Structure probing data (DMS and 2A3) for a 170-nucleotide construct.
Values are in units of 0.01, from 0 to 300, in steps of 10.
For 2A3 the reverse transcriptase was SuperScript II with manganese.
[RMDB]
RNA sequence: GGGAACGACUCGAGUAGAGUCGAAAAUAGUGACUGUCGAUGGUGUAAAUUUUAGAACAGUCGUUCUAAAUAAUAAGAACACUUAUAGAUCACAGCUUGGAUGCGUUUUCUUUAAUGGUGCUGAUAUAUAUCCGAACGUUCGCGUUCGGAAAAAGAAACAACAACAACAAC
Reactivity to DMS in 0.01 (KOAc 150mM, MgCl2 10mM, bicine 150mM(pH8.5), 24C), signal-to-noise 1, nucleotides 027 to 129: u090a120g020u030g010a050c060u010g050u000c110g020a100u000g000g070u000g070u010a020a030a190u010u000u000u000a080g000a000a000c000a240g020u080c140g020u000u000c000u020a000a000a000u060a060a070u120a130a200g000a130a070c020a000c040u050u000a000u000a000g050a070u020c070a000c030a080g030c090u000u000g060g000a030u050g000c150g040u000u040u030u000c000u030u030u030a090a130u040g000g030u040g000c050u060g030a120u030a060u090a070u000a100
Reactivity to 2A3 in 0.01 (KOAc 150mM, MgCl2 10mM, bicine 150mM(pH8.5), 24C), signal-to-noise 2, nucleotides 027 to 129: u120a000g060u020g020a000c040u070g010u100c090g070a030u110g060g070u040g000u000a000a000a270u010u000u000u000a000g000a000a000c000a080g280u130c100g000u000u000c000u040a060a010a000u060a100a050u140a100a060g020a090a000c000a000c000u050u030a000u060a000g020a000u010c010a000c000a010g130c110u020u040g000g050a070u090g000c000g020u030u000u050u000c030u000u050u060a040a040u070g040g000u000g000c000u030g110a100u000a010u040a000u000a050
For DMS, 5,827 sequencing reads were counted. DMS adducts were read by reverse transcription with MarathonRT. Source: RMDB library 15KLIB, as collected in RNAgym.